An RNA of 207 nucleotides, treated with 2A3 and DMS and read out base by base. The RNA was probed in 150 mM KOAc, 10 mM MgCl2 and 150 mM bicine (pH 8.5) at 24 C. It was measured as part of the RMDB library M2RFOK. DMS adducts were read by reverse transcription with MarathonRT.
[RMDB]
RNA sequence: GGGAACGACUCGAGUAGAGUCGAAAAAUCAGAGGGCGCUAUCAUGCAAACUAGGAUUGUCUGCUCAUGCACAGAACCAACUACCGAUAACUAACAGUGCAUGAAGGUUAGUUACUCCAUAUUAAUUAAAACUCGUAAUUCUUCGGAAUUACGAGAAGUUCAAAUAGUUCUUCGGAACUAUUUGAACAAAAGAAACAACAACAACAAC
Reactivity to 2A3 in 0.01 (KOAc 150mM, MgCl2 10mM, bicine 150mM(pH8.5), 24C), signal-to-noise 7, nucleotides 027 to 156: a000u030c020a020g010a030g050g030g010c030g000c040u080a120u300c080a050u240g010c030a020a020a030c030u030a020g030g010a030u030u030g050u080c040u050g020c000u010c010a000u010g000c000a000c000a020g050a120a080c030c010a070a080c050u150a130c030c080g090a090u020a050a020c010u010a010a000c010a020g020u010g030c000a000u010g010a030a010g040g000u020u020a000g000u000u020a040c040u040c060c020a050u090a070u260u190a150a090u090u140a030a110a050a070c000u000c000g000u000a000a000u000u000c000u010u010c070g100g000a000a000u000u000a000c000g000a000g000a000a000
Reactivity to DMS in 0.01 (KOAc 150mM, MgCl2 10mM, bicine 150mM(pH8.5), 24C), signal-to-noise 2, nucleotides 027 to 156: a080u000c020a030g000a070g010g020g020c180g030c050u010a080u000c070a080u000g000c010a120a200a190c060u020a080g010g000a160u000u010g020u000c020u000g000c050u000c090a030u000g110c010a070c020a080g000a080a130c040c030a110a140c060u000a210c050c020g010a130u000a030a060c030u000a030a090c050a090g000u000g010c030a030u010g010a050a130g050g030u010u000a020g000u000u000a030c030u000c060c040a070u000a160u010u010a070a170u000u010a040a070a100a190c000u000c000g030u000a010a020u000u000c010u010u010c300g000g000a010a010u000u000a000c010g000a020g010a000a060

2A3 adducts were read by reverse transcription with SuperScript II with manganese.